The record gives the reactivity of an RNA of 177 nucleotides to 2A3 and DMS. The RNA was probed in 150 mM KOAc, 10 mM MgCl2 and 150 mM bicine (pH 8.5) at 24 C. DMS adducts were read by reverse transcription with MarathonRT.
RNA sequence: GGGAACGACUCGAGUAGAGUCGAAAAACUGGUUAACCUCGAGUUUAUGGGGGGCUCAGUAACAUUCCUGAGCUGCAUUACUUUGGGCUUCGAAGUGUACGAAUCAGAAAGUUAACCUUCAUAUGUGAGCGCAUAACUAAUUCGUUAGUUAUGCGCUAAAAGAAACAACAACAACAAC
Reactivity to 2A3 in 0.01 (KOAc 150mM, MgCl2 10mM, bicine 150mM(pH8.5), 24C), signal-to-noise 2, nucleotides 027 to 126: a000c020u040g020g030u050u000a040a020c000c000u000c030g050a150g030u020u100u110a100u150g040g000g000g020g020g010c000u030c030a010g010u050a070a030c030a220u110u240c000c030u000g020a010g010c010u120g040c040a080u050u070a040c000u060u030u040g060g050g000c000u140u120c040g040a050a000g020u040g020u170a130c010g030a000a030u060c010a030g090a010a060a000g020u010u010a020a020c000c000u100u070c120a070u120a060u160g210u090g120
Reactivity to DMS in 0.01 (KOAc 150mM, MgCl2 10mM, bicine 150mM(pH8.5), 24C), signal-to-noise 4, nucleotides 027 to 126: a110c050u010g010g010u010u000a110a050c030c030u000c070g000a130g010u000u000u000a090u010g030g000g010g020g010g010c050u000c010a020g020u000a110a120c190a150u010u020c180c010u010g010a010g010c040u010g010c040a050u010u000a040c050u000u000u000g000g010g010c100u000u000c030g010a040a060g010u010g000u010a080c070g000a020a030u010c070a110g000a080a080a100g000u010u000a040a060c020c020u020u010c110a080u010a100u010g010u010g000
Source: RMDB library OK2TRN, as collected in RNAgym.